[RMDB]
RNA sequence: GGGAACGACUCGAGUAGAGUCGAAAAAGCACGGUUUUUGAGGACGCAUUUUGUCCGUGCGGAAAUGCCCUCCUUUACACUUUCUCGCAUGGUGCGGGAGUGUGGAGAGGAAACAAAAGCUAGUCUCGAUAGGCGGUUAACUUCGGUUAACCGCCAACUACUUUAUCUACUUCGGUAGAUAAAGUAGAAAAGAAACAACAACAACAAC
Reactivity to 2A3 in 0.01 (KOAc 150mM, MgCl2 10mM, bicine 150mM(pH8.5), 24C), signal-to-noise 7, nucleotides 027 to 156: a000g010c000a000c010g000g000u000u000u000u000u020g060a080g030g010a010c030g030c130a160u010u000u000u000g000u000c000c000g000u000g000c020g060g060a040a050a020u230g020c000c000c000u020c010c000u060u080u050a010c000a000c000u080u180u070c020u020c010g050c020a110u260g290g030u300g140c000g000g000g000a000g000u010g010u010g000g000a030g000a010g020g010a020a020a000c010a000a000a000a000g060c040u090a030g010u000c000u000c030g060a120u150a130g000g000c000g000g000u000u000a000a000c010u060u050c190g040g000u010u000a000a000c000c010g000c000c000a000a000
Reactivity to DMS in 0.01 (KOAc 150mM, MgCl2 10mM, bicine 150mM(pH8.5), 24C), signal-to-noise 1, nucleotides 027 to 156: a100g020c020a020c000g020g010u000u000u000u000u000g000a090g010g010a050c020g030c090a160u000u000u000u000g030u000c000c000g000u000g020c000g000g000a070a060a060u010g000c010c000c010u000c050c010u010u000u000a040c010a010c000u000u000u010c010u000c010g010c020a300u000g020g020u010g040c000g000g010g000a000g020u000g020u000g000g010a040g010a130g020g000a100a030a050c020a010a040a030a040g040c090u010a110g010u000c010u010c090g000a170u010a120g010g030c000g000g010u000u000a010a010c000u010u010c290g050g000u000u000a010a010c010c010g020c000c000a010a040